[RMDB]
RNA sequence: GGGAACGACUCGAGUAGAGUCGAAAAACGCACCGGUAUACGUACCGGUGCGAAUCAGGACACCAGAGGACCAUAGAGCAAAUUACUUCUUCCAGAGUGCUAAAUGAUCCCCUGGUGCCCUAGAAAACACGAGGCAUGAUUUCGAUCAUGCCUCGUGAAAAGAAACAACAACAACAAC
Reactivity to 2A3 in 0.01 (KOAc 150mM, MgCl2 10mM, bicine 150mM(pH8.5), 24C), signal-to-noise 2, nucleotides 027 to 126: a000c000g000c000a010c010c000g000g000u000a020u050a050c300g000u020a020c010c000g000g000u000g000c000g010a000a000u050c040a000g010g030a000c000a000c010c010a000g010a020g000g000a010c010c000a000u000a020g140a000g030c010a070a070a110u160u180a190c070u180u130c020u200u040c020c050a020g030a040g150u010g060c000u010a050a040a030u020g000a010u000c000c000c000c000u000g000g000u000g000c000c000c000u040a080g030a010a100a000a020

The data come from the RNA Mapping Database (RMDB), library RFM100. This 177-nucleotide RNA was probed chemically with 2A3. 2A3 adducts were read by reverse transcription with SuperScript II with manganese. The reactions ran in a buffer of 150 mM KOAc, 10 mM MgCl2 and 150 mM bicine (pH 8.5), at 24 C.